Structure probing data (2A3) for a 207-nucleotide construct. The 2A3 profile rests on 603 reads. The RNA was probed in 150 mM KOAc, 10 mM MgCl2 and 150 mM bicine (pH 8.5) at 24 C.
RNA sequence: GGGAACGACUCGAGUAGAGUCGAAAAUGCUGCCUAAUAUAGGCAGCCCGUCAGUCCAGGGUUCCUGCGCCUUGGGUAGCUGGCGUCAUUAAGUCAGGCCUUUUGAGUGGGAAGGUUAAACUCUAGAACUGUCACAGUGGUAGCCUUGAGCUGUGAUCUUAGAUUGUGUCUUCGGACACAAUCUAAGAAAAGAAACAACAACAACAAC
Reactivity to 2A3 in 0.01 (KOAc 150mM, MgCl2 10mM, bicine 150mM(pH8.5), 24C), signal-to-noise 1, nucleotides 027 to 156: u120g000c000u000g000c000c000u200a300a240u280a100u110a160g000g000c000a000g000c000c000c010g000u010c010a030g080u190c000c020a020g000g000g000u000u030c000c000u000g010c000g000c020c000u000u050g000g030g000u000a010g000c010u040g030g000c000g050u080c020a100u030u300a010a000g020u060c000a000g000g010c000c000u000u000u010u050g000a010g000u000g000g000g040a120a080g020g000u030u210a050a000a000c000u000c000u000a000g000a030a020c030u000g050u030c000a010c040a010g030u070g020g270u210a120g120c050c110u130u120g010a010g010c010u020g000u000g010a000u010